An RNA of 177 nucleotides, treated with 2A3 and DMS and read out base by base. The 2A3 profile rests on 1,324 reads.
RNA sequence: GGGAACGACUCGAGUAGAGUCGAAAACAUCUUCUCUGCCACCCGCUACGAGUGGGCGAUCCUCGAUUUCGCGAUUCUGGCUGUGGGUGCGGUCACCGUACCGAUCUACGAGACCUCGUCAGCGGAGCCCGGGCUAUAGAUUCGUCUAUAGCCCGGGAAAAGAAACAACAACAACAAC
Reactivity to 2A3 in 0.01 (KOAc 150mM, MgCl2 10mM, bicine 150mM(pH8.5), 24C), signal-to-noise 2, nucleotides 027 to 126: c010a080u060c050u120u030c020u020c050u070g060c040c030a070c050c030c000g020c000u000a010c000g040a000g020u170g010g190g010c010g020a070u050c010c080u140c090g210a300u030u140u030c060g020c010g220a230u050u010c010u050g290g000c050u070g040u050g050g000g030u170g250c040g000g040u090c050a090c300c060g040u090a000c040c000g010a020u000c010u010a030c000g040a010g030a070c010c000u030c020g030u020c090a020g040c010g020g000a000g000
Reactivity to DMS in 0.01 (KOAc 150mM, MgCl2 10mM, bicine 150mM(pH8.5), 24C), signal-to-noise 2, nucleotides 027 to 126: c100a080u000c170u000u010c050u000c020u000g000c050c040a300c140c000c000g000c030u010a030c040g030a020g020u010g030g000g000c050g000a040u010c130c060u000c210g000a100u000u040u030c030g000c120g000a120u010u000c000u000g010g030c040u000g040u000g030g000g000u010g010c070g010g000u000c060a100c100c130g020u010a040c030c020g000a050u000c020u010a040c020g000a090g010a110c090c000u000c030g000u000c130a000g000c000g010g000a100g000
For 2A3 the reverse transcriptase was SuperScript II with manganese. The RNA was probed in 150 mM KOAc, 10 mM MgCl2 and 150 mM bicine (pH 8.5) at 24 C. The DMS profile rests on 992 reads.